Description: An RNA of 177 nucleotides, treated with 2A3 and DMS and read out base by base. For 2A3, 6,784 sequencing reads were counted. The RNA was probed in 150 mM KOAc, 10 mM MgCl2 and 150 mM bicine (pH 8.5) at 24 C. 2A3 is a SHAPE reagent: it acylates the 2'-hydroxyl of flexible nucleotides of all four kinds. The DMS profile rests on 3,546 reads.
[RMDB]
RNA sequence: GGGAACGACUCGAGUAGAGUCGAAAAGAUAUGGAGAACUCAAGCUCGAUAAGCUUGAUUCGGAAACGAAUCGAAGCUUUUGACGAGCGUAGGUUCUCCUAAGUCAAAAGUGAGCUUCGGCUCACAACAUCACGAUAACGUUCGCGUUAUCGUGAUGAAAAGAAACAACAACAACAAC
Reactivity to 2A3 in 0.01 (KOAc 150mM, MgCl2 10mM, bicine 150mM(pH8.5), 24C), signal-to-noise 3, nucleotides 027 to 126: g030a000u060a050u240g000g000a000g000a000a010c020u020c200a110a010g000c000u010c020g080a100u030a120a010g000c000u000u010g010a010u000u010c000g030g000a040a100a020c010g010a000a000u020c070g120a020a020g010c000u040u050u070u150g290a140c050g020a000g010c000g020u040a010g000g000u000u000c000u020c000c000u000a010a000g010u010c010a010a020a080a080g000u000g000a010g000c030u060u160c300g120g000c010u020c010a000c000a010a000
Reactivity to DMS in 0.01 (KOAc 150mM, MgCl2 10mM, bicine 150mM(pH8.5), 24C), signal-to-noise 4, nucleotides 027 to 126: g010a020u000a300u000g010g010a020g030a020a000c000u000c030a300a300g000c000u000c020g020a130u010a020a010g010c000u000u000g010a010u000u000c000g000g010a150a050a150c020g010a020a000u000c000g000a020a030g000c000u010u000u010u000g000a250c150g000a010g010c000g000u000a190g040g010u000u000c010u000c000c000u020a000a040g000u010c040a100a080a110a090g010u000g000a020g000c010u000u020c250g030g000c000u000c000a000c020a100a160